[RMDB]
RNA sequence: GGGAACGACUCGAGUAGAGUCGAAAAUUUGUAUUCGUACAAAAAAUUGAUAUGGACCGUACUACCCACCACUCAGAACUACUGCAUUUGGUCGGAAACGACCAGGGUGCAGCUGAGUGAGGUACGGUCCUAAGUCCAUGUUGAGAUUCGUCUCAAAUAACUAAAGAGCAUUCGUGCUCUUUAGUUAAAAAGAAACAACAACAACAAC
Reactivity to 2A3 in 0.01 (KOAc 150mM, MgCl2 10mM, bicine 150mM(pH8.5), 24C), signal-to-noise 1, nucleotides 027 to 156: u070u000u090g070u050a180u030u200c190g060u160a070c150a020a110a040a090a020a070u070u110g000a000u040a020u010g000g010a000c010c000g000u010a000c010u090a080c000c000c040a020c000c000a000c000u010c000a000g020a040a020c090u290a040c010u300g000c000a020u030u120u000g000g010u000c010g000g000a000a000a000c010g000a010c000c000a000g030g010g020u030g000c000a000g000c000u000g000a010g010u000g000a010g010g000u000a000c000g020g000u010c000c000u000a000a000g000u040c010c000a060u070g060u020u100g040a020g000a040u040u070c140g060u020c150u000c050a110a150a060
Reactivity to DMS in 0.01 (KOAc 150mM, MgCl2 10mM, bicine 150mM(pH8.5), 24C), signal-to-noise 2, nucleotides 027 to 156: u000u000u010g020u000a050u010u000c210g020u000a020c030a000a040a050a060a070a150u010u010g000a090u000a130u010g000g030a020c000c000g040u000a000c030u000a080c050c000c020a300c090c000a020c020u000c000a050g010a060a140c080u000a150c000u000g000c000a010u000u000u000g000g020u000c020g020g020a110a040a120c010g020a010c000c010a030g020g030g050u010g010c040a000g000c010u000g000a040g010u000g000a090g000g000u000a020c000g000g030u000c000c000u000a000a040g010u000c000c050a240u000g010u000u000g000a020g000a100u000u000c080g000u010c000u000c010a010a090a260
Description:
Conditions: 150 mM KOAc, 10 mM MgCl2 and 150 mM bicine (pH 8.5), 24 C. Structure probing data (2A3 and DMS) for a 207-nucleotide construct. For 2A3, 1,099 sequencing reads were counted. For DMS the reverse transcriptase was MarathonRT. Values cover nucleotides 27 to 156.